[RMDB]
RNA sequence: GGGAACGACUCGAGUAGAGUCGAAAAGAUAUGGACCUGGAGAACGCUCAAGGCUCGAUGAAAUCGGAAACGAUGGAGAGCCGAAGGCGACCAGGUCCUAAGUCAAAGUGGGUGUUCGCACCCACAACAUUGGUACAUAGUUCGCUAUGUACCAAUGAAAAGAAACAACAACAACAAC
Reactivity to DMS in 0.01 (KOAc 150mM, MgCl2 10mM, bicine 150mM(pH8.5), 24C), signal-to-noise 9, nucleotides 027 to 126: g000a050u000a300u010g000g010a010c000c000u010g010g010a130g010a150a100c030g020c000u000c030a080a300g000g000c000u000c010g000a130u010g020a090a110a010u000c000g000g000a130a070a190c010g000a010u000g000g010a070g000a020g010c010c000g000a150a120g000g000c010g010a100c000c000a010g010g010u000c000c000u000a010a060g010u000c020a100a110a120g020u000g010g000g030u000g020u000u010c230g000c000a020c010c000c000a000c010a030a090
Reactivity to 2A3 in 0.01 (KOAc 150mM, MgCl2 10mM, bicine 150mM(pH8.5), 24C), signal-to-noise 7, nucleotides 027 to 126: g020a010u060a040u120g000g000a000c000c000u000g030g020a170g070a300a080c000g000c010u050c070a060a060g010g000c000u000c010g290a300u080g030a050a050a010u010c010g010g020a070a040a040c010g000a010u010g000g030a020g000a000g000c010c010g010a010a000g010g000c010g010a020c000c000a000g000g000u000c000c000u000a000a000g010u010c020a020a030a010g000u010g000g010g000u010g030u050u080c200g060c090a010c010c010c010a000c000a000a000